Structure probing data (DMS and 2A3) for a 207-nucleotide construct.
The data come from the RNA Mapping Database (RMDB), library M2RFOK.
RNA sequence: GGGAACGACUCGAGUAGAGUCGAAAAAUCCUCAGGUUCAUAAGCGUGAAGAUUGGGUGUUCAUGCUCCAUGCAUGACAUGUGCCUCCUUUGAACCUUGUUACGACCUUGGCACAUUACCCAUCUGAAAAAGACGUUCGCGUUCGCGCGAACGUCAAGGUACAUAUCAUGUUCGCAUGAUAUGUACCAAAAGAAACAACAACAACAAC
Reactivity to DMS in 0.01 (KOAc 150mM, MgCl2 10mM, bicine 150mM(pH8.5), 24C), signal-to-noise 3, nucleotides 027 to 156: a090u000c010c000u000c050a050g030g000u000u000c000a060u010a050a060g030c120g030u000g010a140a050g010a050u010u010g010g000g020u000g020u010u000c020a020u000g000c000u010c190c180a140u010g040c020a020u020g020a030c300a170u000g010u000g000c000c010u000c110c040u000u020u000g000a040a020c020c030u000u000g020u000u010a180c190g000a120c140c060u000u000g000g030c000a030c030a100u010u000a080c010c000c000a040u000c020u020g000a070a070a090a150a120g010a020c000g060u000u010c000g020c000g020u000u000c270g030c060g040c000g000a000a000c010g000u000c010a020a010
Reactivity to 2A3 in 0.01 (KOAc 150mM, MgCl2 10mM, bicine 150mM(pH8.5), 24C), signal-to-noise 6, nucleotides 027 to 156: a000u030c010c000u030c010a000g020g000u000u000c010a010u070a230a050g040c150g120u130g150a070a000g010a060u210u280g010g010g000u060g030u090u030c000a000u000g000c010u050c200c080a130u300g000c000a000u000g010a000c020a020u010g000u000g000c000c000u030c010c000u020u000u020g000a010a010c000c000u000u090g070u020u120a100c090g060a120c030c090u060u090g000g000c010a000c000a020u030u150a040c000c000c010a000u000c020u030g040a090a090a010a010a020g010a000c000g010u000u000c010g000c000g020u040u040c170g000c000g000c000g070a000a000c000g000u000c000a000a000
Notes: For DMS the reverse transcriptase was MarathonRT. For DMS, 6,316 sequencing reads were counted. The reactions ran in a buffer of 150 mM KOAc, 10 mM MgCl2 and 150 mM bicine (pH 8.5), at 24 C.